[RMDB]
RNA sequence: GGGAACGACUCGAGUAGAGUCGAAAAAACGCUUCACAACCUGAAAGAAGCGCCUGUUAUCAGCACGGUUGAUCCAUUUACCGGUGCAGACCUCUGCAAACACCGGGUUGCAGAACAUCGCGACGGACAAGGGAGGAUACCUUCGGGUAUCCUCCAACUGUAUAAAGGGGUUCGCCCCUUUAUACAGAAAAGAAACAACAACAACAAC
Reactivity to 2A3 in 0.01 (KOAc 150mM, MgCl2 10mM, bicine 150mM(pH8.5), 24C), signal-to-noise 1, nucleotides 027 to 156: a000a000c000g000c010u030u060c040a040c040a170a000c040c010u030g020a060a080a060g010a010a010g000c000g040c000c040u110g010u140u130a150u210c020a000g030c030a000c090g000g020u010u030g050a130u090c030c000a070u150u060u100a090c000c000g030g000u030g040c010a000g030a050c000c050u040c030u040g010c010a000a000a060c070a050c090c060g130g220g000u000u010g030c010a010g000a050a000c020a020u060c040g010c020g060a020c030g020g000a050c070a060a110g100g000g000a010g000g010a000u000a000c000c000u060u100c140g060g030g000u000a010u000c000c000u000c000c000a000a000
Reactivity to DMS in 0.01 (KOAc 150mM, MgCl2 10mM, bicine 150mM(pH8.5), 24C), signal-to-noise 2, nucleotides 027 to 156: a010a030c000g070c000u000u000c000a220c060a110a300c020c000u030g000a110a160a150g000a030a040g010c020g030c070c050u020g030u000u000a120u020c050a050g030c060a080c040g000g050u010u010g030a220u000c060c060a110u000u000u010a120c040c040g030g030u020g020c020a090g000a140c070c070u010c020u000g030c040a130a040a050c030a300c110c070g000g040g000u000u000g040c000a070g010a070a110c060a030u000c030g010c050g010a160c050g040g000a070c080a080a130g020g030g030a100g000g010a040u000a000c000c000u000u010c270g050g030g060u000a010u000c000c000u000c010c000a020a000